The record gives the reactivity of an RNA of 207 nucleotides to DMS.
The DMS profile rests on 5,855 reads.
DMS adducts were read by reverse transcription with MarathonRT.
Conditions: 150 mM KOAc, 10 mM MgCl2 and 150 mM bicine (pH 8.5), 24 C.
RNA sequence: GGGAACGACUCGAGUAGAGUCGAAAAGGGGUCAACCGUUUGACGUUCCUAUAGCUGAUUAGAGCUUCGACAUGAGACCAUACUGAAGCCUCCACGGUAUGUGUCUCAACAGCGAAGCUCUAAUCAGCUAUAGGAACCGAGGUUGACGGAGGCACCCGACUCGUAUUUAGUUCGCUAAAUACGAGUCAAAAGAAACAACAACAACAAC
Reactivity to DMS in 0.01 (KOAc 150mM, MgCl2 10mM, bicine 150mM(pH8.5), 24C), signal-to-noise 2, nucleotides 027 to 156: g010g020g000g030u000c000a030a020c000c010g010u000u010u010g030a160c110g000u000u000c010c000u000a010u010a010g030c010u000g000a000u000u010a020g000a040g010c010u010u000c000g010a090c120a300u020g010a040g010a010c000c010a040u000a030c010u020g010a100a130g020c040c020u030c020c000a300c040g020g010u000a010u000g010u000g030u010c000u000c000a000a050c120a170g030c020g010a040a030g010c000u000c010u000a000a000u000c000a000g020c000u000a000u000a000g000g010a010a000c000c000g010a090g010g020u000u000g010a020c000g040g020a040g020g030c030a150c020c020c040